[RMDB]
RNA sequence: GGGAACGACUCGAGUAGAGUCGAAAAGGAAAGCUGGACUGUAACACAGUCUACUACAGCGGGUGUUAGGUCAUUUUAUAGAUGAGGAAAUUGGGAAUAUGAGAUGCUUAUUCACUUGCCCCUCUUCCAUGGGGGCUGGUUCUGUGAUACAAACCUAGUAUUUAAAAUCGUUCGCGAUUUUAAAUACAAAAGAAACAACAACAACAAC
Reactivity to DMS in 0.01 (KOAc 150mM, MgCl2 10mM, bicine 150mM(pH8.5), 24C), signal-to-noise 2, nucleotides 027 to 156: g010g020a070a060a090g060c020u020g030g010a060c000u000g020u020a160a160c120a300c020a070g020u000c040u010a080c050u000a090c020a100g040c000g030g000g000u010g000u010u000a070g000g000u000c040a060u000u000u020u000a150u000a110g010a070u000g010a100g020g010a030a050a080u010u010g020g020g010a070a080u000a170u000g010a140g010a110u000g000c030u000u000a060u000u000c040a050c050u020u000g010c000c020c000c020u000c100u000u000c180c110a130u000g000g000g020g010g060c020u000g000g010u010u000c060u000g020u000g000a100u000a130c060a070a070a120c030c000u000a260
Reactivity to 2A3 in 0.01 (KOAc 150mM, MgCl2 10mM, bicine 150mM(pH8.5), 24C), signal-to-noise 3, nucleotides 027 to 156: g050g010a070a040a030g020c050u040g000g010a010c010u020g020u170a150a000c060a010c000a140g000u010c030u020a070c030u030a020c030a040g010c020g030g010g000u020g030u050u030a010g020g000u040c010a010u000u050u060u080a150u080a080g070a050u080g020a020g020g060a050a070a110u150u110g030g030g030a060a040u060a060u160g060a070g020a030u060g030c020u060u060a060u190u160c040a020c040u020u050g000c000c010c000c020u060c050u200u040c070c030a050u080g000g000g000g000g000c020u030g000g000u060u060c040u060g050u040g040a040u070a160c040a030a050a010c020c010u030a020

This 207-nucleotide RNA was probed chemically with DMS and 2A3. For DMS the reverse transcriptase was MarathonRT. For 2A3 the reverse transcriptase was SuperScript II with manganese.